[RMDB]
RNA sequence: GGGAACGACUCGAGUAGAGUCGAAAAUAUCUGUACUUUUCAGAAUGGACAAGGUGACCUACUUAUACUAAAAUGUAAGCCUGUAUUUAAGCAGUAUAAGCAAUACUUAAAUAUAUUACUGCCCUUAUAGUCAAUCAUACUUCGGUAUGAUUGACUAAAAAGAAACAACAACAACAAC
Reactivity to DMS in 0.01 (KOAc 150mM, MgCl2 10mM, bicine 150mM(pH8.5), 24C), signal-to-noise 3, nucleotides 027 to 126: u010a070u000c010u000g000u030a080c080u020u030u020u020c090a030g010a110a070u010g010g010a090c100a050a030g010g010u010g020a100c050c090u010a030c000u000u000a000u000a020c020u010a060a070a070a100u020g020u030a060a140g010c060c020u000g000u000a020u000u000u000a010a050g000c050a000g000u000a040u010a050a080g010c040a080a060u000a100c020u020u000a010a010a020u010a030u000a030u020u020a090c070u010g010c020c010c020u000u010a060
Reactivity to 2A3 in 0.01 (KOAc 150mM, MgCl2 10mM, bicine 150mM(pH8.5), 24C), signal-to-noise 4, nucleotides 027 to 126: u100a010u000c020u000g050u040a120c100u130u110u040u130c040a030g040a090a110u120g050g000a070c090a100a030g030g020u040g040a050c020c020u010a010c030u070u030a050u050a080c060u080a030a050a070a080u170g060u080a110a000g060c010c000u040g040u050a120u060u040u030a040a020g000c040a000g060u030a080u030a150a030g050c110a150a060u030a080c000u030u040a010a000a010u080a010u010a050u050u140a050c020u040g020c000c000c000u050u080a050

This 177-nucleotide RNA was probed chemically with DMS and 2A3. Reactivities are rounded to 0.1 and cut off at 0 and 3. The RNA was probed in 150 mM KOAc, 10 mM MgCl2 and 150 mM bicine (pH 8.5) at 24 C. DMS adducts were read by reverse transcription with MarathonRT. Values cover nucleotides 27 to 126.